[RMDB]
RNA sequence: GGGAACGACUCGAGUAGAGUCGAAAACAGUAAGGAUGGAAAGACAUGCUUCAUUGGACAUCAGGAACAGAGCCUCAAGACUUAAUAGCGACAACUGAUGAGACUGGCACAAUAUAAUGAGUCGGGGAUCGACCAUACGUUUCGACGUAUGGUCGAUAAAAGAAACAACAACAACAAC
Reactivity to DMS in 0.01 (KOAc 150mM, MgCl2 10mM, bicine 150mM(pH8.5), 24C), signal-to-noise 2, nucleotides 027 to 126: c070a150g010u000a020a070g020g010a040u020g010g010a090a090a070g030a120c030a050u010g020c090u020u020c130a040u010u010g000g000a110c040a030u000c040a060g030g000a030a040c150a080g020a140g010c000c030u000c090a100a110g010a050c070u000u010a070a100u000a100g000c050g030a060c070a060a060c060u000g000a060u000g000a130g000a070c030u000g000g000c080a030c110a000a100u000a090u010a040a020u010g010a040g020u020c030g010g000g010g010
Reactivity to 2A3 in 0.01 (KOAc 150mM, MgCl2 10mM, bicine 150mM(pH8.5), 24C), signal-to-noise 2, nucleotides 027 to 126: c040a000g070u130a060a060g040g030a030u070g040g080a190a050a000g070a020c000a010u050g040c000u030u030c040a130u030u090g060g000a010c000a020u020c030a020g000g020a020a020c030a040g010a030g010c000c030u040c060a120a020g000a030c020u090u080a090a030u070a200g090c040g050a040c020a100a000c010u040g010a010u080g030a010g030a060c010u030g060g000c030a010c010a050a090u180a010u050a080a130u070g020a000g000u010c060g000g000g030g010